This 177-nucleotide RNA was probed chemically with DMS.
It was measured as part of the RMDB library TTRINS.
For DMS, 807 sequencing reads were counted.
RNA sequence: GGGAACGACUCGAGUAGAGUCGAAAAGAUAUGGAGCAUGAACUACAGUAACCUCAGCAUGGAGAGGCUUUCGGAAACGAAAGCUACCCACCUCCAUGCUGAGGUCUUACUGCAUGCUCCUAAGUCACCUGCCCUACUUGUUCGCAAGUAGGGCAGGAAAAGAAACAACAACAACAAC
Reactivity to DMS in 0.01 (KOAc 150mM, MgCl2 10mM, bicine 150mM(pH8.5), 24C), signal-to-noise 1, nucleotides 027 to 126: g040a080u000a300u000g000g040a000g020c000a030u000g000a070a090c090u010a300c030a040g000u010a030a040c010c000u000c000a010g010c000a010u010g000g010a080g020a060g060g000c040u010u000u000c000g000g000a090a070a190c000g010a030a000a020g020c000u000a030c130c040c190a300c280c000u000c000c000a030u000g030c000u000g000a000g000g000u000c100u030u000a040c040u020g010c010a000u000g000c000u000c000c000u010a020a050g010u000c000a250

Annotation
Reactivities are given for positions 27 through 126.